[RMDB]
RNA sequence: GGGAACGACUCGAGUAGAGUCGAAAAGAUUAUGUGGGAGAGGCGCCCUUUCGUUUCAUCGGAUAAUUAAUUGCCAGUCGCUGGCUUUAGCGAUAUUGAUGUCAUCUGUAGCGAUGACUAUGCUACCUUAAGGUAUGAUCCGGAUACCACCGGUAAAGGAUAAUAGCAGUUUCGACUGCUAUUAUCCAAAAGAAACAACAACAACAAC
Reactivity to DMS in 0.01 (KOAc 150mM, MgCl2 10mM, bicine 150mM(pH8.5), 24C), signal-to-noise 2, nucleotides 027 to 156: g000a140u010u000a080u000g030u020g020g020g010a170g030a090g030g030c040g020c000c030c030u000u000u010c030g020u000u020u000c050a100u010c010g010g020a120u000a020a120u010u000a070a120u010u020g020c020c030a150g030u000c020g010c020u000g020g060c130u000u000u000a030g050c010g000a070u000a040u000u010g010a180u020g020u000c010a030u000c020u000g020u000a190g020c110g030a030u020g010a070c000u010a070u000g010c040u000a050c010c040u000u010a090a120g020g020u000a030u010g010a090u000c010c020g020g000a170u010a140c040c060a130c020c020g000g020u000a040a070a190
Reactivity to 2A3 in 0.01 (KOAc 150mM, MgCl2 10mM, bicine 150mM(pH8.5), 24C), signal-to-noise 3, nucleotides 027 to 156: g060a040u130u150a070u180g040u110g030g030g010a070g000a020g030g030c010g010c000c000c000u030u050u060c080g020u030u030u090c060a090u090c040g060g000a030u050a110a040u120u160a070a050u190u150g010c010c020a040g040u100c040g030c060u020g020g050c090u090u070u100a010g000c010g000a010u020a090u070u160g100a060u080g010u010c000a000u000c030u090g130u150a010g060c010g050a000u000g010a000c010u010a050u090g020c010u030a010c010c020u080u170a080a040g020g000u040a020u080g030a050u060c010c000g000g020a010u030a040c010c040a020c020c010g000g000u020a080a060a020